[RMDB]
RNA sequence: GGGAACGACUCGAGUAGAGUCGAAAACCAGGAGGAGGGCCUUGCCCGACUGAGAGUGCUCGCUGAAAGAGGCUGCGACGCGGGUUAUUCAGUUCGAUGCGCCCAGGCUGACGGUAGGACGCCUAACAGUUGAGUAUGCAUUCGUGCAUACUCAACUAAAAGAAACAACAACAACAAC
Reactivity to DMS in 0.01 (KOAc 150mM, MgCl2 10mM, bicine 150mM(pH8.5), 24C), signal-to-noise 4, nucleotides 027 to 126: c010c010a160g010g020a090g000g010a220g010g010g000c040c060u030u040g030c030c030c030g000a080c050u010g050a070g000a110g030u000g010c020u010c020g010c030u000g000a080a090a110g010a140g000g000c020u020g000c020g000a110c130g000c020g000g000g000u000u000a090u030u010c060a060g020u000u020c090g010a050u010g010c060g000c030c020c030a020g010g000c040u010g000a150c190g010g000u020a020g000g000a100c060g000c030c010u000a080a060c100
Reactivity to 2A3 in 0.01 (KOAc 150mM, MgCl2 10mM, bicine 150mM(pH8.5), 24C), signal-to-noise 5, nucleotides 027 to 126: c000c000a010g050g060a070g020g030a040g020g010g010c020c040u070u090g040c020c000c000g010a010c010u020g020a040g020a010g130u130g020c000u000c010g020c030u040g040a080a070a010g130a050g100g020c020u050g070c030g050a060c080g010c000g020g010g020u060u050a050u040u040c020a030g030u070u110c070g020a050u140g010c010g010c010c010c000a010g020g000c040u060g010a050c030g000g030u060a020g030g020a050c060g020c010c000u030a110a050c040
Structure probing data (DMS and 2A3) for a 177-nucleotide construct. It was measured as part of the RMDB libraries RFM100 and RFMREP. The reactions ran in a buffer of 150 mM KOAc, 10 mM MgCl2 and 150 mM bicine (pH 8.5), at 24 C. For 2A3 the reverse transcriptase was SuperScript II with manganese. Values cover nucleotides 27 to 126.